[RMDB]
RNA sequence: GGGAACGACUCGAGUAGAGUCGAAAAGUUCACGUACGUACGAACGAGUGAACGUGAACUCUCACUCGUUCGAGUGUACUCUCGUUCGAGAACGAGAGAACACGAGAUCGUGAUCGUGUACUCGUUCUCACGUGAACACACGUGAUCGAGUGUUCACGCAGGAGAUCAUCUUCGGAUGAUCUCCUGCAAAAGAAACAACAACAACAAC
Reactivity to 2A3 in 0.01 (KOAc 150mM, MgCl2 10mM, bicine 150mM(pH8.5), 24C), signal-to-noise 5, nucleotides 027 to 156: g010u030u010c010a000c020g020u070a010c020g040u050a020c020g020a030a010c030g010a030g010u030g030a020a020c070g010u060g060a080a070c030u000c010u000c050a000c000u000c000g010u000u010c000g010a010g000u040g000u080a140c010u010c000u010c000g060u110u120c140g050a020g010a120a000c010g000a000g000a010g030a040a000c000a000c000g050a040g010a130u210c110g090u110g080a110u020c010g010u010g000u040a040c000u000c010g010u020u020c010u010c010a000c000g000u000g040a100a010c010a010c010a000c070g050u050g050a070u140c060g050a040g050u070g020u020u030c020a010c050
Reactivity to DMS in 0.01 (KOAc 150mM, MgCl2 10mM, bicine 150mM(pH8.5), 24C), signal-to-noise 1, nucleotides 027 to 156: g080u010u000c020a040c050g060u000a050c110g010u070a210c030g050a070a010c020g000a150g060u020g030a060a080c040g000u010g010a070a110c080u010c030u000c050a070c000u010c010g070u000u000c010g050a150g040u000g070u010a040c000u000c000u010c000g010u000u010c120g060a100g050a030a020c000g030a070g010a020g050a070a060c010a030c000g010a130g040a140u000c080g000u010g000a210u010c010g030u000g030u000a140c020u000c000g000u000u010c030u000c010a250c040g000u020g060a110a030c150a110c000a050c050g000u000g060a110u010c000g000a030g040u000g020u010u000c020a010c000